[RMDB]
RNA sequence: GGGAACGACUCGAGUAGAGUCGAAAAUACACUUUACGUGUGCUGGUUUCAUUACUUUGUCCCAAACCAGGCACGCGUAAUUAAAGGCCAGUUUGGCCAGGUCCGCGUUAUCCAUGGUCACCAAUAACGCUGCUAUUUCAUUCGUGAAAUAGCAGCGAAAAGAAACAACAACAACAAC
Reactivity to DMS in 0.01 (KOAc 150mM, MgCl2 10mM, bicine 150mM(pH8.5), 24C), signal-to-noise 2, nucleotides 027 to 126: u010a080c130a190c090u000u000u000a000c000g000u000g000u000g020c000u010g020g000u000u000u020c120a090u000u010a080c170u000u000u010g000u010c030c020c010a060a020a010c000c010a020g020g020c000a010c010g020c000g040u000a000a000u000u000a060a130a070g000g000c000c020a100g030u000u000u010g030g000c000c000a060g020g000u000c010c050g000c070g020u010u010a050u000c040c050a070u010g000g010u000c030a110c080c050a060a060u020a090a160
Reactivity to 2A3 in 0.01 (KOAc 150mM, MgCl2 10mM, bicine 150mM(pH8.5), 24C), signal-to-noise 2, nucleotides 027 to 126: u080a000c060a000c030u000u020u000a000c000g030u000g000u000g060c000u010g020g000u040u010u130c090a160u120u100a120c080u220u210u140g100u060c020c010c000a000a000a000c030c010a090g170g000c000a000c010g000c000g010u010a000a000u000u050a130a070a030g030g000c000c030a090g140u130u220u110g050g000c040c000a010g040g000u050c030c010g020c020g020u020u040a000u090c020c000a010u050g040g010u060c020a020c070c010a050a090u120a100a000
Structure probing data (DMS and 2A3) for a 177-nucleotide construct. The data come from the RNA Mapping Database (RMDB), library M2PK90. For 2A3 the reverse transcriptase was SuperScript II with manganese. For DMS the reverse transcriptase was MarathonRT.